[RMDB]
RNA sequence: GGGAACGACUCGAGUAGAGUCGAAAAGAUAUGGACUCGCUACCCACCUCCAUACGUCGAUGAAAGGAACUUUUAUCGGAAACGAUAAAAGUUCCUGGAGACGCGGUGGAGAGGCGAGUCCUAAGUCCGUGAAGAUAAACUUCGGUUUAUCUUCACGAAAAGAAACAACAACAACAAC
Reactivity to 2A3 in 0.01 (KOAc 150mM, MgCl2 10mM, bicine 150mM(pH8.5), 24C), signal-to-noise 3, nucleotides 027 to 126: g080a080u210a260u300g000g010a000c000u010c000g030c010u160a300c000c020c010a010c010c010u010c000c040a080u090a300c050g050u160c030g300a300u100g040a030a020a000g020g000a000a000c010u000u000u020u000a000u000c000g050g040a130a100a000c010g000a010u000a000a000a000a000g000u000u000c010c000u000g000g000a010g010a020c020g000c050g120g000u010g000g020a050g000a000g010g010c000g020a010g000u000c000c000u010a010a000g060u000c070
Reactivity to DMS in 0.01 (KOAc 150mM, MgCl2 10mM, bicine 150mM(pH8.5), 24C), signal-to-noise 3, nucleotides 027 to 126: g030a100u010a140u000g010g000a000c000u000c010g030c010u000a160c020c010c000a300c100c010u000c010c020a000u000a060c000g020u010c010g020a100u000g020a300a150a020g000g000a010a000c000u010u000u000u000a020u000c000g000g020a100a100a290c000g010a010u000a000a010a010a000g000u000u000c000c000u000g000g010a180g000a000c000g020c060g010g020u000g010g000a030g010a110g010g000c000g000a010g010u000c000c010u000a000a130g000u010c160
Record summary
Source: RMDB library TTRINS, as collected in RNAgym. Chemical mapping of a 177-nucleotide RNA with 2A3 and DMS. DMS adducts were read by reverse transcription with MarathonRT. The RNA was probed in 150 mM KOAc, 10 mM MgCl2 and 150 mM bicine (pH 8.5) at 24 C.